[RMDB]
RNA sequence: GGGAACGACUCGAGUAGAGUCGAAAAGAGUCCUUGGAAUCCACUGGGGGUGGGGAAUCUCAACAAGUGGUCUGCCUGAAUGAUAGUAUGCUACGGUACCUAUUCCGGGGUGUUGGGAUAUCCUCUAAAUGUGUGAACAUUUCGAUGUUCACACAUUAAAAGAAACAACAACAACAAC
Reactivity to 2A3 in 0.01 (KOAc 150mM, MgCl2 10mM, bicine 150mM(pH8.5), 24C), signal-to-noise 1, nucleotides 027 to 126: g010a000g140u000c000c000u020u050g030g090a060a130u050c010c030a030c060u010g010g000g000g060g020u050g000g080g000g000a010a010u040c010u000c000a000a040c020a070a050g010u040g180g010u140c030u070g010c000c000u080g130a130a110u180g060a010u050a030g070u030a040u110g020c010u030a020c060g050g020u020a040c000c020u010a070u180u060c010c040g070g000g040g000u040g030u000u060g090g000g000a040u020a190u030c000c000u020c010u020a080
Reactivity to DMS in 0.01 (KOAc 150mM, MgCl2 10mM, bicine 150mM(pH8.5), 24C), signal-to-noise 4, nucleotides 027 to 126: g000a160g020u000c030c020u000u000g010g000a110a140u010c030c040a090c100u010g010g030g000g000g010u000g000g010g000g000a060a060u010c000u010c030a020a020c050a090a120g010u010g010g020u010c060u000g020c030c030u000g000a110a100u000g000a110u010a070g010u000a080u000g020c030u000a060c110g020g020u010a060c090c030u000a130u010u000c080c040g000g000g020g020u000g010u010u010g010g010g000a060u000a100u000c020c020u000c050u010a040

The record gives the reactivity of an RNA of 177 nucleotides to 2A3 and DMS. For DMS, 4,343 sequencing reads were counted. For 2A3, 936 sequencing reads were counted. The RNA was probed in 150 mM KOAc, 10 mM MgCl2 and 150 mM bicine (pH 8.5) at 24 C.